This 177-nucleotide RNA was probed chemically with DMS and 2A3. Reactivities are given for positions 27 through 126. 2A3 adducts were read by reverse transcription with SuperScript II with manganese. It was measured as part of the RMDB library RFMREP. The reactions ran in a buffer of 150 mM KOAc, 10 mM MgCl2 and 150 mM bicine (pH 8.5), at 24 C. DMS (dimethyl sulfate) methylates the pairing face of unpaired adenines and cytosines.
RNA sequence: GGGAACGACUCGAGUAGAGUCGAAAAGUAAUUCACUUAGCAAUUACGCAGUAGGUAUUUAUGCUUACCAGCAUAAAUAGAAGGGAAAUUAUACGAUGUUCAGCUUUAUAAGAGUUGACUCAUAUUUAAAUAUCAAUCAGUUCGCUGAUUGAUAUUUAAAAGAAACAACAACAACAAC
Reactivity to DMS in 0.01 (KOAc 150mM, MgCl2 10mM, bicine 150mM(pH8.5), 24C), signal-to-noise 4, nucleotides 027 to 126: g020u000a020a010u000u000c020a150c160u000u000a110g020c110a040a040u000u000a020c040g020c160a120g030u020a110g020g000u000a000u000u000u000a000u000g010c000u000u020a210c300c230a100g010c000a010u000a000a000a020u000a030g000a090a100g010g010g010a100a050a100u010u000a050u010a070c100g000a040u000g010u010u000c020a000g000c010u000u000u010a100u010a110a180g000a010g000u000u000g000a040c010u000c010a060u000a050u000u000u000
Reactivity to 2A3 in 0.01 (KOAc 150mM, MgCl2 10mM, bicine 150mM(pH8.5), 24C), signal-to-noise 2, nucleotides 027 to 126: g020u010a000a010u030u000c040a040c160u110u130a060g000c050a020a070u040u020a030c050g000c040a050g090u200a040g180g140u000a040u010u020u000a020u010g000c010u000u100a150c040c040a020g000c000a000u020a000a000a000u030a010g090a080a060g140g040g040a060a120a020u300u170a100u040a120c080g000a030u040g010u030u030c000a000g010c010u130u110u080a290u080a230a080g020a000g010u000u000g020a010c020u010c020a050u050a120u180u010u010